This 177-nucleotide RNA was probed chemically with 2A3 and DMS. For DMS the reverse transcriptase was MarathonRT.
[RMDB]
RNA sequence: GGGAACGACUCGAGUAGAGUCGAAAAGUGAACCCCAGGUCCCGGGCCGCCGGCUCGCCGCGCACCAGGGGCCGGCGGACAGAAGAGCGGCCGAGCGGCUCGAGGCUGGGGGACCGCGGGCGCGGCCGACCCUAAAACGAUUCGUCGUUUUAGGGUCAAAAGAAACAACAACAACAAC
Reactivity to 2A3 in 0.01 (KOAc 150mM, MgCl2 10mM, bicine 150mM(pH8.5), 24C), signal-to-noise 4, nucleotides 027 to 126: g070u040g050a050a080c000c000c000c010a020g010g150u110c000c000c000g000g010g000c000c000g000c000c000g000g000c040u050c020g000c000c000g060c010g000c030a070c020c050a090g290g030g040g000c000c010g000g000c000g000g020a020c020a050g130a130a010g030a040g050c060g020g000c010c010g010a060g020c000g010g000c000u000c000g010a040g010g010c000u010g000g000g000g000g010a000c010c000g000c010g050g070g050c110g000c000g040g000c000c040
Reactivity to DMS in 0.01 (KOAc 150mM, MgCl2 10mM, bicine 150mM(pH8.5), 24C), signal-to-noise 2, nucleotides 027 to 126: g010u010g020a140a170c010c010c010c000a080g050g010u010c010c030c020g020g000g030c010c010g010c010c000g010g020c010u010c010g050c000c000g020c160g020c000a050c050c110a200g020g010g000g020c000c000g000g020c000g000g000a050c250a080g010a150a110g000a180g030c160g010g000c010c000g000a040g020c010g000g000c000u000c020g000a060g000g000c030u010g010g000g030g000g010a040c000c040g000c030g000g000g030c030g050c020g010g000c180c030
It was measured as part of the RMDB library RFM100.